Description
Chemical mapping of a 177-nucleotide RNA with 2A3 and DMS. DMS adducts were read by reverse transcription with MarathonRT. The RNA was probed in 150 mM KOAc, 10 mM MgCl2 and 150 mM bicine (pH 8.5) at 24 C. It was measured as part of the RMDB library OK2TST.
RNA sequence: GGGAACGACUCGAGUAGAGUCGAAAAUGCGCAUGACCUCCUGGGACAUGGCGUGACGCCGUUGGAGGGCCCCGUGAGGCGUCCGCGGUUUUACGGGGGAGGAAGAAAAUUAACCCGCUGGAAUAGAGUAAUGGUAUUACUUCGGUAAUACCAUUACAAAAGAAACAACAACAACAAC
Reactivity to 2A3 in 0.01 (KOAc 150mM, MgCl2 10mM, bicine 150mM(pH8.5), 24C), signal-to-noise 5, nucleotides 027 to 126: u060g000c040g000c030a050u090g050a080c000c000u020c020c040u070g020g020g030a020c030a080u110g090g040c030g030u070g030a020c050g010c040c000g050u080u180g060g050a060g060g070g000c000c020c000c000g050u060g080a080g010g000c010g040u000c010c010g000c000g010g000u030u070u040u060a030c030g010g010g030g000g010a020g060g040a050a060g030a030a140a010a010u080u050a040a060c020c020c030g020c070u090g040g060a100a120u080a130g070a020
Reactivity to DMS in 0.01 (KOAc 150mM, MgCl2 10mM, bicine 150mM(pH8.5), 24C), signal-to-noise 8, nucleotides 027 to 126: u000g000c060g020c080a060u010g000a150c020c010u000c040c060u010g010g010g010a090c050a060u000g020g020c000g010u000g010a050c060g020c010c010g010u010u010g030g010a090g020g010g010c020c020c010c040g010u010g010a100g000g010c020g000u000c020c020g010c010g000g010u000u000u010u010a040c080g000g000g000g000g000a080g010g000a110a090g000a070a060a080a090u010u010a100a160c060c020c020g020c070u000g020g010a120a120u010a100g010a300